[RMDB]
RNA sequence: GGGAACGACUCGAGUAGAGUCGAAAAGCGGGCCGGCUGUUCUUCUUUCUCUUUCCUCGUCUUCCUCGGUCAACCUCCGGAGUUCCUCUUCCUCCUCCUUGCUGAGGGACUUUCCUCCCGCGCUCAGACACGGUAGUGUUCGCACUACCGAAAAGAAACAACAACAACAAC
Reactivity to DMS in 0.01 (KOAc 150mM, MgCl2 10mM, bicine 150mM(pH8.5), 24C), signal-to-noise 9, nucleotides 027 to 129: g040c050g000g000g020c020c020g010g010c080u000g000u020u030c050u010u000c030u010u010u000c020u000c000u010u010u020c020c020u020c040g040u010c060u010u020c060c050u000c070g000g000u030c070a090a110c090c030u000c030c040g020g010a080g000u030u000c000c010u010c010u010u010c030c010u020c030c020u010c010c010u010u020g020c050u000g000a110g000g040g000a070c060u010u010u020c040c040u010c010c020c010g010c090g000c060u020c050a060g010a160c190a140
Reactivity to 2A3 in 0.01 (KOAc 150mM, MgCl2 10mM, bicine 150mM(pH8.5), 24C), signal-to-noise 9, nucleotides 027 to 129: g040c020g010g020g030c020c020g030g020c050u060g060u060u030c020u050u010c000u020u090u020c060u000c000u050u050u020c010c010u030c020g060u010c050u090u040c010c020u030c030g020g020u060c040a080a120c020c010u030c010c010g020g010a040g020u030u020c010c000u010c000u040u030c000c020u020c000c010u030c000c010u040u080g010c030u040g030a060g010g010g010a030c000u040u060u030c000c010u020c000c000c000g050c010g030c020u060c050a050g020a090c040a020
Overview:
An RNA of 170 nucleotides, treated with DMS and 2A3 and read out base by base. For 2A3 the reverse transcriptase was SuperScript II with manganese. High 2A3 reactivity points to a flexible backbone, as in loops and unpaired stretches. Reactivities are given for positions 27 through 129. The RNA was probed in 150 mM KOAc, 10 mM MgCl2 and 150 mM bicine (pH 8.5) at 24 C. For 2A3, 166,513 sequencing reads were counted.